[RMDB]
RNA sequence: GGGAACGACUCGAGUAGAGUCGAAAAGUGGGGUUCGCCCCACCCAAAGGGGUCCUAUAAUCCGUAGUCAAGCUUUGAUCUAUACUGAAGCCUCCACGGUAUAGGGAGCUUGCUACGGGUAGGACGGAGGCACCCCGUGCGAGGGAUUCGUCCCUAAAACUUAGGAGAUGUUCGCAUCUCCUAAGUUAAAAGAAACAACAACAACAAC
Reactivity to DMS in 0.01 (KOAc 150mM, MgCl2 10mM, bicine 150mM(pH8.5), 24C), signal-to-noise 1, nucleotides 027 to 156: g000u010g000g010g020g040u000u000c240g010c000c000c000c000a010c020c010c020a070a150a100g000g020g000g030u000c000c020u000a140u000a130a030u000c000c010g000u010a010g020u000c030a040a020g000c000u000u000u000g000a060u000c040u000a040u000a000c050u010g000a050a070g040c000c010u000c010c000a300c040g020g000u000a020u000a010g020g000g000a000g010c020u000u000g010c010u000a010c030g020g000g020u000a020g040g020a060c070g020g000a050g030g000c000a300c040c000c000c010g030u000g010c090g010a100g000g000g000a130u010u010c110g020u000c000c000c000u000a030a110
Reactivity to 2A3 in 0.01 (KOAc 150mM, MgCl2 10mM, bicine 150mM(pH8.5), 24C), signal-to-noise 4, nucleotides 027 to 156: g030u030g000g030g010g010u020u090c170g130c000c010c000c010a020c000c010c030a090a060a010g040g010g000g010u050c030c020u140a160u140a280a010u010c010c000g000u000a000g150u300c070a010a000g000c000u300u250u020g000a000u000c000u000a000u000a010c000u030g050a200a050g010c000c000u000c000c000a010c010g000g000u000a000u000a010g000g000g000a010g000c000u000u000g010c000u010a000c000g000g000g000u020a000g000g000a010c030g000g000a000g000g000c000a010c000c000c000c010g020u090g100c090g090a100g030g020g020a040u090u110c150g080u040c030c000c000u100a220a260
Conditions: 150 mM KOAc, 10 mM MgCl2 and 150 mM bicine (pH 8.5), 24 C. This 207-nucleotide RNA was probed chemically with DMS and 2A3. Reactivities are given for positions 27 through 156. For 2A3, 4,377 sequencing reads were counted. The data come from the RNA Mapping Database (RMDB), library RNAMAK.